An RNA of 177 nucleotides, treated with DMS and 2A3 and read out base by base. For DMS, 12,547 sequencing reads were counted. The reactions ran in a buffer of 150 mM KOAc, 10 mM MgCl2 and 150 mM bicine (pH 8.5), at 24 C. Source: RMDB library OK1LIB, as collected in RNAgym. For 2A3, 15,361 sequencing reads were counted.

[RMDB]
RNA sequence: GGGAACGACUCGAGUAGAGUCGAAAAGAACGAGCCAUCAUGAUAGCUUCGUAGCACGAGAAGAGCUGUGAUGGCGACUCUUCGAAAGCCAUCUACUGCGAGAAGAGUGCUAUGUGUUAUGCUCGGAGGGAUAUCAUAUGUUCGCAUAUGAUAUCCCAAAAGAAACAACAACAACAAC
Reactivity to DMS in 0.01 (KOAc 150mM, MgCl2 10mM, bicine 150mM(pH8.5), 24C), signal-to-noise 7, nucleotides 027 to 126: g010a120a110c030g010a040g010c030c250a090u040c180a080u060g020a040u020a030g010c020u030u030c030g030u010a020g010c040a060c010g000a230g010a130a060g010a300g000c000u010g000u000g000a010u000g000g010c030g010a080c140u010c110u050u030c160g010a090a150a240g000c030c010a030u020c020u020a020c030u010g010c000g000a250g000a080a050g000a300g010u010g000c000u000a010u020g030u000g000u020u010a030u000g000c020u010c020g000g000a200
Reactivity to 2A3 in 0.01 (KOAc 150mM, MgCl2 10mM, bicine 150mM(pH8.5), 24C), signal-to-noise 9, nucleotides 027 to 126: g080a080a010c040g000a000g020c050c040a150u170c040a050u230g090a090u080a060g020c020u180u200c030g020u010a010g020c030a010c040g100a080g040a230a040g060a050g030c030u030g000u010g010a000u010g000g000c030g020a020c000u040c050u280u170c090g100a100a040a010g010c020c000a010u010c080u170a070c010u060g040c030g020a070g070a220a040g110a040g020u000g000c000u010a010u020g040u000g010u030u030a030u100g010c020u020c040g010g010a130